RNA sequence: GGGAACGACUCGAGUAGAGUCGAAAAUCUAUUGCGUUCGCGCAAUAGAAAAUAAAAACAGCGGUAAAUCGAGGCGUAAAAUUACCGCUGAACGCCUCGAUAAAAUCAGAACCUUCGGGUUCUGAAAUCUAUCUAUUCUGUUCGCAGAAUAGAUAGAAAAAGAAACAACAACAACAAC
Reactivity to DMS in 0.01 (KOAc 150mM, MgCl2 10mM, bicine 150mM(pH8.5), 24C), signal-to-noise 2, nucleotides 027 to 126: u000c000u000a000u000u000g010c000g020u000u010c260g040c030g000c000a000a000u000a000g000a050a020a140a090u010a020a090a080a070a110c070a080g000c060g010g000u010a050a080a040u010c020g020a010g000g010c010g010u000a010a070a060a070u010u020a090c010c040g030c040u000g000a070a020c020g000c000c010u000c020g010a080u000a040a050a130a120u000c010a000g000a030a010c000c000u010u020c220g030g050g000u000u000c010u000g010a010a070a090
Reactivity to 2A3 in 0.01 (KOAc 150mM, MgCl2 10mM, bicine 150mM(pH8.5), 24C), signal-to-noise 2, nucleotides 027 to 126: u000c000u000a010u000u010g010c010g020u030u040c190g000c000g000c070a000a000u010a000g010a010a020a000a000u050a010a070a030a020a010c030a000g020c010g030g050u090a190a120a030u030c010g010a000g010g000c010g000u040a040a060a080a200u160u080a070c010c010g010c010u000g000a000a010c010g010c010c000u000c000g000a000u040a030a060a000a040u060c010a000g010a010a000c010c000u070u080c260g140g000g010u000u000c000u000g000a000a000a000